RNA sequence: GGGAACGACUCGAGUAGAGUCGAAAAGCGUACAUUUUCAAGCAGAACAACAUCGCCCGGAGACAUCUUAGAGACGACAUCUGCAGCAUUCAGGCAGUCAGGUGCGAAUGUGACGGGUCUCGAUAACUAGAAGGUAUGGCUUCGGCCAUACCUUCUAAAAAGAAACAACAACAACAAC
Reactivity to DMS in 0.01 (KOAc 150mM, MgCl2 10mM, bicine 150mM(pH8.5), 24C), signal-to-noise 1, nucleotides 027 to 126: g010c180g000u030a120c060a020u000u030u000u000c120a070a160g030c070a070g000a060a150c200a200a280c150a200u080c060g040c070c000c000g000g110a180g060a070c300a180u000c090u000u000a090g000a050g000a210c000g000a060c090a000u000c000u070g000c030a050g010c000a160u020u000c200a070g010g030c010a000g020u000c010a070g000g000u000g030c150g000a000a020u000g000u000g000a120c050g020g000g000u000c010u000c000g000a130u000a000a230c180
Reactivity to 2A3 in 0.01 (KOAc 150mM, MgCl2 10mM, bicine 150mM(pH8.5), 24C), signal-to-noise 1, nucleotides 027 to 126: g010c000g110u070a030c000a170u090u140u000u040c000a120a120g050c010a020g000a020a020c110a020a070c040a010u030c020g060c080c000c000g000g000a010g020a000c090a050u120c070u060u200a090g000a010g000a020c020g000a000c040a050u040c020u000g010c000a000g020c000a000u000u240c040a000g250g000c000a060g000u230c020a010g200g030u050g000c000g000a000a000u050g000u000g010a090c000g060g080g000u000c080u070c020g060a080u000a020a120c050

The record gives the reactivity of an RNA of 177 nucleotides to DMS and 2A3. Reactivities are given for positions 27 through 126. For DMS, 1,019 sequencing reads were counted. 2A3 adducts were read by reverse transcription with SuperScript II with manganese. Source: RMDB library OK1LIB, as collected in RNAgym.